RNA sequence: GGGAACGACUCGAGUAGAGUCGAAAAAGGGCUGGAUUCGUCCAGCCCUGCACAAUCGUACGCAACGAAGCGUACGUCAUUACGCAAAUGACGUAAAGCGUAGAACCACGGACUUCGGUCCGUGGAACGCCCAUAAGAUAUUCGUAUCUUAUGGGCGAAAAGAAACAACAACAACAAC
Reactivity to 2A3 in 0.01 (KOAc 150mM, MgCl2 10mM, bicine 150mM(pH8.5), 24C), signal-to-noise 7, nucleotides 027 to 126: a000g010g000g010c010u010g000g020a020u040u070c160g050u010c050c000a000g000c000c010c000u000g000c000a010c020a010a120u110c020g020u030a010c010g000c050a160a080c180g210a190a050g070c010g040u010a010c000g000u000c000a050u010u120a020c050g020c100a070a060a170u130g080a050c050g090u100a050a050a070g010c030g020u030a040g050a100a050c000c000a000c010g000g000a000c000u040u050c240g080g000u010c000c000g000u000g000g000a000a010
Reactivity to DMS in 0.01 (KOAc 150mM, MgCl2 10mM, bicine 150mM(pH8.5), 24C), signal-to-noise 7, nucleotides 027 to 126: a010g010g000g010c000u000g010g010a030u000u010c170g010u000c000c000a000g010c000c000c000u000g000c120a060c210a080a090u010c070g020u000a010c000g000c010a080a090c170g000a110a070g020c070g000u000a010c010g010u010c060a030u000u000a050c220g020c170a060a050a050u000g000a040c070g020u000a040a050a130g000c010g000u000a060g010a140a230c000c000a000c010g010g010a020c000u000u020c140g020g010u000c010c000g020u000g000g000a020a040

The data come from the RNA Mapping Database (RMDB), library M2PK50. The record gives the reactivity of an RNA of 177 nucleotides to 2A3 and DMS. For 2A3, 14,749 sequencing reads were counted. The DMS profile rests on 10,084 reads. 2A3 adducts were read by reverse transcription with SuperScript II with manganese. The RNA was probed in 150 mM KOAc, 10 mM MgCl2 and 150 mM bicine (pH 8.5) at 24 C.